[RMDB]
RNA sequence: GGGAACGACUCGAGUAGAGUCGAAAACAGCCAAAAGUCAUUUCAUUACCAAACCAUGGGGUGAAUAUACCAUGUAAAGCAGUUUGGGAUCAGAACUCACAGUCUGAAUUGUAAGUGAUGAGACUGCUGUCUCUCUGCUACAGCUUCUUGGCUGGCAAGCUGACGAUAUCUUCGGAUAUCGUCAGCUAAAAGAAACAACAACAACAAC
Reactivity to 2A3 in 0.01 (KOAc 150mM, MgCl2 10mM, bicine 150mM(pH8.5), 24C), signal-to-noise 1, nucleotides 027 to 156: c000a000g000c000c000a020a000a000a000g040u050c000a060u110u080u010c040a040u090u090a300c000c040a150a160a050c010c040a060u080g000g000g000g060u030g000a030a000u040a000u080a110c010c020a010u090g000u090a240a050a000g080c000a010g010u080u160u050g000g000g000a060u150c050a020g020a070a030c070u040c080a060c000a040g140u010c010u060g160a250a150u210u170g090u200a090a240g060u060g120a110u070g000a030g030a020c010u010g020c030u040g090u000c000u020c000u000c010u040g010c010u030a090c010a030g000c000u060u000c030u210u000g000g000c000u000g000g000c030a050
Chemical mapping of a 207-nucleotide RNA with 2A3. Values cover nucleotides 27 to 156.